The record gives the reactivity of an RNA of 177 nucleotides to 2A3 and DMS. As a SHAPE reagent, 2A3 marks flexible, mostly unpaired nucleotides at the ribose 2'-OH. For 2A3 the reverse transcriptase was SuperScript II with manganese. Source: RMDB libraries RFM100 and RFMREP, as collected in RNAgym. Reactivities are rounded to 0.1 and cut off at 0 and 3. The RNA was probed in 150 mM KOAc, 10 mM MgCl2 and 150 mM bicine (pH 8.5) at 24 C.

[RMDB]
RNA sequence: GGGAACGACUCGAGUAGAGUCGAAAACAGCAGCGGCCAAGGGUGAGGUUGUUCGCCUAUUAAAGGGGAUCGUGAGCUGGGUUUAGACCGUCGUGAGACAGGUCGGUUGCUAUCUAACGGGGGUGUCAACCCGCUAGACUUUCGAGUCUAGCGGGUUAAAAGAAACAACAACAACAAC
Reactivity to 2A3 in 0.01 (KOAc 150mM, MgCl2 10mM, bicine 150mM(pH8.5), 24C), signal-to-noise 2, nucleotides 027 to 126: c020a020g110c030a030g000c000g100g000c050c020a030a020g030g010g000u030g040a110g070g040u030u020g010u030u070c040g040c000c020u080a150u080u240a140a000a010g060g050g010g020a050u110c000g000u030g080a010g000c040u050g040g040g020u020u080u120a080g010a030c000c030g030u030c010g020u070g040a130g010a020c060a150g080g050u000c020g000g000u060u110g000c020u050a090u120c000u020a050a050c070g000g000g030g000g000u020g030u030c010
Reactivity to DMS in 0.01 (KOAc 150mM, MgCl2 10mM, bicine 150mM(pH8.5), 24C), signal-to-noise 3, nucleotides 027 to 126: c060a110g010c030a300g010c050g010g000c050c050a110a080g010g020g020u000g010a080g010g000u000u010g010u010u000c060g020c010c000u010a120u020u020a030a070a120g000g010g010g010a040u020c080g010u010g000a130g020c020u020g000g000g000u010u010u000a080g010a030c010c000g000u000c010g000u060g000a210g000a020c020a090g020g010u000c010g000g020u010u000g000c080u000a080u030c070u010a040a090c070g020g010g000g000g010u010g020u020c160